An RNA of 177 nucleotides, treated with DMS and 2A3 and read out base by base. Reactivities are given for positions 27 through 126.

[RMDB]
RNA sequence: GGGAACGACUCGAGUAGAGUCGAAAACGACGGGUCUUCGGACCCGUCGAAAUUAUGCGUAGCUCGCGCUACGCAGGCAUCGAGUAGGUCGAGCCACCUACAAAAGCUUCGAGUUCGCUCGAAGCAACCAUCGUCAGUAGUUCGCUACUGACGAUGGAAAAGAAACAACAACAACAAC
Reactivity to DMS in 0.01 (KOAc 150mM, MgCl2 10mM, bicine 150mM(pH8.5), 24C), signal-to-noise 2, nucleotides 027 to 126: c000g000a010c000g050g020g000u000c000u000u000c220g030g020a000c000c000c000g000u010c000g010a000a020a080u020u000a100u000g010c000g000u000a000g000c000u000c300g020c270g000c000u000a020c000g030c000a000g000g000c150a150u000c140g010a100g010u000a030g000g010u010c020g000a190g020c050c100a110c000c000u000a030c070a050a060a090a150g000c010u000u000c000g000a000g010u000u000c160g030c000u000c010g000a000a000g010c000a040a060
Reactivity to 2A3 in 0.01 (KOAc 150mM, MgCl2 10mM, bicine 150mM(pH8.5), 24C), signal-to-noise 2, nucleotides 027 to 126: c020g000a000c000g000g000g030u030c050u060u100c260g090g020a000c030c040c000g020u020c000g000a000a010a000u170u040a050u030g000c010g010u010a000g010c030u030c110g130c020g000c030u000a020c000g000c000a010g030g000c010a120u120c070g030a040g020u040a020g050g100u060c020g020a020g020c000c030a010c000c000u010a030c000a010a120a010a020g000c000u000u010c000g000a000g020u020u100c220g060c050u000c000g000a000a000g000c000a010a000